[RMDB]
RNA sequence: GGGAACGACUCGAGUAGAGUCGAAAAAGGUUAUUUGAUGUCUGGUUUCUCUGUGUUUGCCUCCUUAGUCAAACCGGCACGAUGUCCAGGCACCAGAACCAGAACACCAUCCAGGAGCUGCUGCAGACUGUAGCAGCGAUUUCGAUCGCUGCUACAGAAAAGAAACAACAACAACAAC
Reactivity to 2A3 in 0.01 (KOAc 150mM, MgCl2 10mM, bicine 150mM(pH8.5), 24C), signal-to-noise 2, nucleotides 027 to 126: a000g180g020u150u040a250u190u160u090g010a020u010g010u000c010u010g040g040u010u040u020c050u000c020u020g060u040g040u210u020u010g010c010c000u140c040c050u180u170a010g000u040c020a000a020a030c010c000g000g010c130a060c150g020a030u040g060u040c010c000a000g020g000c020a000c010c010a030g000a020a000c000c000a000g030a020a020c060a020c040c010a020u000c010c010a090g040g060a050g040c030u060g000c020u020g030c040a040g070a200
Reactivity to DMS in 0.01 (KOAc 150mM, MgCl2 10mM, bicine 150mM(pH8.5), 24C), signal-to-noise 4, nucleotides 027 to 126: a090g010g000u000u000a080u010u010u010g020a020u000g010u000c010u000g010g000u010u000u010c010u000c010u010g010u020g010u000u000u000g000c090c030u000c300c210u010u010a060g020u000c030a010a010a040c020c020g000g030c300a090c300g010a020u000g000u020c000c020a010g000g000c000a020c020c030a020g000a050a030c000c020a090g000a050a080c080a100c040c030a090u000c060c040a090g000g010a100g000c040u000g010c040u000g010c070a100g010a180